[RMDB]
RNA sequence: GGGAACGACUCGAGUAGAGUCGAAAAGAAGAAAAAAAAAAGCCCAAAUCGAAAUCGAAGGAGAAAUAACAUUUGAUUAAUGUUUUUUUUCCCUUUUUAUGAUUUAGGGUUCUUUCUUUCAUCCCUAGUUAGAUGGUGGAUUCGUCCACCAUCUAACAAAAGAAACAACAACAACAAC
Reactivity to 2A3 in 0.01 (KOAc 150mM, MgCl2 10mM, bicine 150mM(pH8.5), 24C), signal-to-noise 4, nucleotides 027 to 126: g000a000a000g010a030a020a020a010a000a010a000a000a030a000g000c000c000c000a000a010a000u010c000g000a020a030a010u030c020g070a100a030g030g020a040g000a010a010a000u030a010a000c010a010u030u040u110g130a110u090u300a030a030u020g010u000u000u000u000u000u000u000u000c050c000c010u050u020u010u020u030a210u190g010a010u010u010u080a120g000g000g000u040u000c030u030u020u020c000u000u070u030c020a060u020c010c000c000u010a020